[RMDB]
The data come from the RNA Mapping Database (RMDB), library OK3TST. Chemical mapping of a 207-nucleotide RNA with 2A3 and DMS. High DMS reactivity at an A or C suggests that its Watson-Crick edge is free. The DMS profile rests on 2,661 reads. Reactivities are rounded to 0.1 and cut off at 0 and 3.
RNA sequence: GGGAACGACUCGAGUAGAGUCGAAAAUGUUCCUCCGUCUAUAAAAGGAGACAAUGCCAGCCAUGGGUUUUGGGGAGGAUUCAACAAGACAAUGCUUAUAAAGUACUUAUCAUCACAAUGGGCUUCUAUGAGCAUAGGAGGUGUUAUUUGCAGAUGAUCCGGUAAAUACUUUCGAGUAUUUACCGGAAAAAGAAACAACAACAACAAC
Reactivity to 2A3 in 0.01 (KOAc 150mM, MgCl2 10mM, bicine 150mM(pH8.5), 24C), signal-to-noise 2, nucleotides 027 to 156: u100g010u000u020c000c000u000c000c030g050u000c050u080a130u060a070a140a030a030g050g030a050g000a060c020a040a010u060g070c050c020a000g000c030c040a120u080g000g010g000u050u070u070u080g010g010g000g000a050g040g000a020u060u070c010a020a040c030a090a030g020a010c020a000a050u060g000c000u030u070a010u030a110a010a050g020u020a180c000u120u150a090u180c020a000u070c040a030c030a090a220u030g000g000g000c010u000u000c010u010a030u020g040a030g000c030a020u070a060g000g090a000g000g000u030g030u060u060a080u050u070u060g090c000a040g180a060u300g020a010
Reactivity to DMS in 0.01 (KOAc 150mM, MgCl2 10mM, bicine 150mM(pH8.5), 24C), signal-to-noise 2, nucleotides 027 to 156: u000g030u000u000c020c010u000c060c030g020u000c070u010a170u010a060a100a190a180g000g010a080g020a110c050a050a060u000g050c030c050a200g030c050c040a070u000g000g020g020u000u030u020u030g020g000g030g040a070g040g000a160u000u000c050a060a060c060a100a100g010a090c080a090a090u010g010c020u000u000a100u000a060a050a060g020u010a040c050u000u000a060u000c040a120u010c150a070c160a060a080u000g000g010g000c000u000u020c050u000a030u010g000a050g050c020a030u000a100g040g000a030g030g050u000g000u000u010a100u010u000u000g060c040a080g000a170u020g000a220